[RMDB]
RNA sequence: GGGAACGACUCGAGUAGAGUCGAAAAGAGCGUCGAGAGACGAAGAGAAGUGCAUAGAUCCACAACGGAGAACGUAAUAAUGCACGCAUGUGGAUUAGUGUCCGGAACAACGGGCACAAGAGGCAGACAUCAGGAGGGAGUUCGCUCCCUCCUGAUGAAAAGAAACAACAACAACAAC
Reactivity to DMS in 0.01 (KOAc 150mM, MgCl2 10mM, bicine 150mM(pH8.5), 24C), signal-to-noise 4, nucleotides 027 to 126: g020a090g010c020g000u010c030g040a210g000a180g000a030c010g010a070a080g030a080g000a070a090g010u020g010c020a100u000a110g010a040u000c000c000a030c030a070a170c050g000g010a120g020a120a110c120g030u010a150a100u070a080a040u060g010c040a020c030g030c170a060u000g030u000g000g010a040u010u010a080g030u000g030u010c000c010g020g000a100a050c290a090a080c020g050g000g000c010a000c000a050a020g010a170g000g010c040a060g000a260
Reactivity to 2A3 in 0.01 (KOAc 150mM, MgCl2 10mM, bicine 150mM(pH8.5), 24C), signal-to-noise 3, nucleotides 027 to 126: g080a040g000c000g020u010c000g020a040g000a020g000a060c060g020a080a010g120a010g010a210a010g030u040g000c010a060u050a040g060a060u030c010c000a000c000a110a060c090g060g000a170g060a140a020c060g020u020a050a050u090a070a020u230g050c050a060c020g010c030a070u090g000u010g050g050a020u020u070a030g000u000g000u010c000c010g000g030a140a120c120a070a030c040g000g000g000c010a000c000a020a010g050a060g060g000c010a000g050a100